Chemical mapping of a 177-nucleotide RNA with 2A3 and DMS. It was measured as part of the RMDB library RFMREP. Conditions: 150 mM KOAc, 10 mM MgCl2 and 150 mM bicine (pH 8.5), 24 C.
RNA sequence: GGGAACGACUCGAGUAGAGUCGAAAAGCAUGGCCGCCGUCAGCUCGUACCGUGAGGCGUCCUGUUAAGUCAGGCAACGAGCGAGACCCGCACUCCUAAUUGCCAGCAACACCCUCGUGGUGGUUGGGUAAUAAUAGUAGUUCGCUACUAUUAUUACAAAAGAAACAACAACAACAAC
Reactivity to 2A3 in 0.01 (KOAc 150mM, MgCl2 10mM, bicine 150mM(pH8.5), 24C), signal-to-noise 9, nucleotides 027 to 126: g030c040a080u110g030g010c020c020g020c020c010g070u050c020a020g000c010u010c030g040u050a070c020c030g040u060g070a060g030g020c030g050u110c000c000u010g020u030u090a170a180g300u040c030a010g000g000c020a030a000c020g010a000g000c010g000a040g010a070c000c030c010g000c020a040c030u020c010c000u050a110a100u100u090g030c000c000a010g000c010a040a060c000a020c020c030c000u110c140g080u210g020g000u020g020g080u050u060g070g000
Reactivity to DMS in 0.01 (KOAc 150mM, MgCl2 10mM, bicine 150mM(pH8.5), 24C), signal-to-noise 9, nucleotides 027 to 126: g010c060a100u010g010g010c030c050g010c040c050g010u010c040a230g010c020u000c040g010u000a260c050c030g010u010g010a190g010g010c140g000u010c010c000u010g000u000u000a060a130g010u000c020a030g010g010c300a150a050c050g000a040g000c030g000a100g000a080c030c060c050g000c070a110c080u000c010c020u000a070a080u010u000g010c010c010a070g010c040a080a090c020a030c010c000c010u010c240g010u010g010g010u000g000g010u000u000g000g000